[RMDB]
RNA sequence: GGGAACGACUCGAGUAGAGUCGAAAAAAUGGUGAAAUUACGGCAAAUGGAGCAUCGAUUGAGGAGAUGAAUAUUGAUGCAUGGAGAAAUCGGCUUGCCGUUGUUCGUCAGCAGCCAUUUAUUUUCGAUGAUACACUUCGAUACAAUCUCACAAUCGCUACCCACACGAAUUCGUUCGUGUGGGUAGAAAAGAAACAACAACAACAAC
Reactivity to 2A3 in 0.01 (KOAc 150mM, MgCl2 10mM, bicine 150mM(pH8.5), 24C), signal-to-noise 7, nucleotides 027 to 156: a000a000u060g000g000u110g050a070a030a090u100u040a020c020g000g000c000a020a030a050u140g120g020a080g010c000a010u020c020g030a020u030u090g070a100g130g060a120g050a100u160g050a130a050u130a030u060u050g020a010u040g000c040a050u080g070g040a100g090a040a070a110u130c030g080g010c060u040u040g000c000c010g010u010u020g020u030u080c110g060u070c080a050g030c010a000g000c060c000a020u030u090u100a190u020u040u010u000c010g000a000u010g010a010u030a070c080a030c120u080u090c020g000a000u030a120c040a050a060u000c020u020c020a040c040a050a100u150c100g000
Reactivity to DMS in 0.01 (KOAc 150mM, MgCl2 10mM, bicine 150mM(pH8.5), 24C), signal-to-noise 1, nucleotides 027 to 156: a010a030u000g050g050u020g000a090a030a030u000u000a050c000g010g000c050a010a090a130u000g020g000a140g000c020a080u000c060g030a030u010u000g010a260g000g030a190g000a130u000g010a120a170u010a050u000u010g000a040u010g050c020a110u020g040g000a140g000a070a130a020u000c090g000g070c040u000u010g010c010c020g030u000u000g000u000u000c100g000u010c070a060g120c080a150g000c040c000a090u030u000u000a100u000u000u010u000c010g000a100u010g010a300u010a000c060a080c140u040u010c020g000a070u010a080c090a120a080u000c020u000c020a130c090a100a060u000c030g000

Description
The record gives the reactivity of an RNA of 207 nucleotides to 2A3 and DMS. For 2A3, 6,234 sequencing reads were counted. The RNA was probed in 150 mM KOAc, 10 mM MgCl2 and 150 mM bicine (pH 8.5) at 24 C. The DMS profile rests on 1,868 reads. For DMS the reverse transcriptase was MarathonRT.